The record gives the reactivity of an RNA of 177 nucleotides to DMS and 2A3. For 2A3, 2,938 sequencing reads were counted. Source: RMDB library OK1LIB, as collected in RNAgym. Values are in units of 0.01, from 0 to 300, in steps of 10.
[RMDB]
RNA sequence: GGGAACGACUCGAGUAGAGUCGAAAAGCUGGGCGGGAUCGCCGCGGCGAAGUCGUCAGGAAUGACCACGACGUCACCGAGGUCGACUUUCGGCAGCGGUCGGUCGAAGUCGACCGACGGCAAGAUGAUGAAGGCCAAAUUUCGAUUUGGCCUUCAUAAAAGAAACAACAACAACAAC
Reactivity to DMS in 0.01 (KOAc 150mM, MgCl2 10mM, bicine 150mM(pH8.5), 24C), signal-to-noise 3, nucleotides 027 to 126: g020c070u000g030g000g010c030g010g010g000a110u010c050g000c010c000g000c060g020g050c000g010a050a130g020u000c210g000u000c060a050g000g060a170a170u020g000a090c040c140a050c060g010a210c060g010u000c020a080c020c010g000a300g000g010u000c010g020a030c030u010u020u020c000g010g000c000a090g000c080g000g000u000c020g030g000u030c020g000a080a060g020u010c000g010a000c000c000g000a090c000g000g010c090a050a100g000a080u050g020
Reactivity to 2A3 in 0.01 (KOAc 150mM, MgCl2 10mM, bicine 150mM(pH8.5), 24C), signal-to-noise 5, nucleotides 027 to 126: g040c040u080g010g020g080c010g030g030g090a140u210c060g000c030c000g120c020g000g000c010g010a020a030g050u030c020g020u030c050a060g010g110a180a240u150g030a060c040c000a070c090g110a050c030g020u030c010a000c070c010g030a020g050g000u020c020g000a020c050u120u200u110c040g020g010c030a040g050c020g070g020u130c070g000g010u000c000g010a020a010g030u040c010g000a000c000c030g020a050c000g000g000c030a040a020g050a070u240g010